Record summary:
The record gives the reactivity of an RNA of 177 nucleotides to 2A3 and DMS. High 2A3 reactivity points to a flexible backbone, as in loops and unpaired stretches. The DMS profile rests on 4,435 reads.
[RMDB]
RNA sequence: GGGAACGACUCGAGUAGAGUCGAAAACGUUACAGUGAUCCAUCGAUGGAUAGUGUGUAGUUGCCAGUUUUGGCAAUAAAUUAAUAAUUUAGGCACAUGAUACUGGGCAACCCGGAAAAGGAUACAAAUACGUGGAGAGAUUCGUCUCUCCACGUAUAAAAGAAACAACAACAACAAC
Reactivity to 2A3 in 0.01 (KOAc 150mM, MgCl2 10mM, bicine 150mM(pH8.5), 24C), signal-to-noise 3, nucleotides 027 to 126: c050g000u000u050a160c000a000g000u070g060a000u000c000c000a050u160c160g210a160u190g000g010a050u020a140g020u000g000u010g000u050a110g060u020u010g000c040c040a070g090u100u180u290u060g030g000c020a010a000u060a040a020a000u090u090a000a070u200a080a020u030u040u270a120g090g020c020a000c000a000u040g030a010u020a110c010u010g000g000g000c020a040a070c010c000c000g010g010a030a060a040a020g150g010a020u080a230c090a050a120
Reactivity to DMS in 0.01 (KOAc 150mM, MgCl2 10mM, bicine 150mM(pH8.5), 24C), signal-to-noise 2, nucleotides 027 to 126: c240g010u000u000a070c070a020g010u010g010a020u010c020c000a170u020c300g020a160u020g000g000a010u010a130g010u010g000u020g020u020a110g010u000u000g000c010c000a030g030u020u050u030u010g020g020c000a020a010u000a040a020a050u020u000a070a080u050a110a110u000u000u000a070g000g000c010a010c020a040u020g020a130u040a000c030u010g000g020g010c020a070a070c000c000c010g000g000a100a060a050a050g000g000a110u020a020c150a020a050

2A3 adducts were read by reverse transcription with SuperScript II with manganese. DMS adducts were read by reverse transcription with MarathonRT.